[RMDB]
The data come from the RNA Mapping Database (RMDB), library TTRDEL. The record gives the reactivity of an RNA of 177 nucleotides to DMS and 2A3. For DMS, 967 sequencing reads were counted.
RNA sequence: GGGAACGACUCGAGUAGAGUCGAAAAGAUAUGGACAAGCAUCGAUCGUGCCUCCGAAGAACUCGGAAACGAGGGAGGAGUGCACGGGAGCUUGUCCUAAGUCAAAAGUCUCGGUUCGCCGAGACAACUACGACACAACGUUCGCGUUGUGUCGUAGAAAAGAAACAACAACAACAAC
Reactivity to DMS in 0.01 (KOAc 150mM, MgCl2 10mM, bicine 150mM(pH8.5), 24C), signal-to-noise 2, nucleotides 027 to 126: g000a100u000a300u010g000g000a000c000a000a010g010c020a240u000c140g030a100u000c010g000u000g000c020c000u000c000c000g010a000a100g010a230a290c000u010c010g000g000a150a200a090c010g000a040g070g000g000a060g000g010a000g000u010g000c000a000c000g030g000g010a050g040c000u000u000g000u000c000c000u000a000a040g010u010c070a100a070a150a170g000u010c000u000c020g000g000u010u000c270g000c000c000g010a020g000a000c010a030a030
Reactivity to 2A3 in 0.01 (KOAc 150mM, MgCl2 10mM, bicine 150mM(pH8.5), 24C), signal-to-noise 1, nucleotides 027 to 126: g010a010u050a080u190g000g000a010c000a000a000g020c000a300u230c080g230a160u130c000g040u010g000c000c020u070c000c030g160a280a120g030a060a020c000u000c000g040g000a100a090a030c000g010a020g000g000g000a000g020g020a010g070u200g000c000a000c010g000g000g010a000g000c000u000u000g000u000c000c000u010a000a000g000u000c020a000a020a070a080g000u000c010u010c000g000g040u110u110c300g020c060c000g010a000g030a000c000a010a000

For DMS the reverse transcriptase was MarathonRT.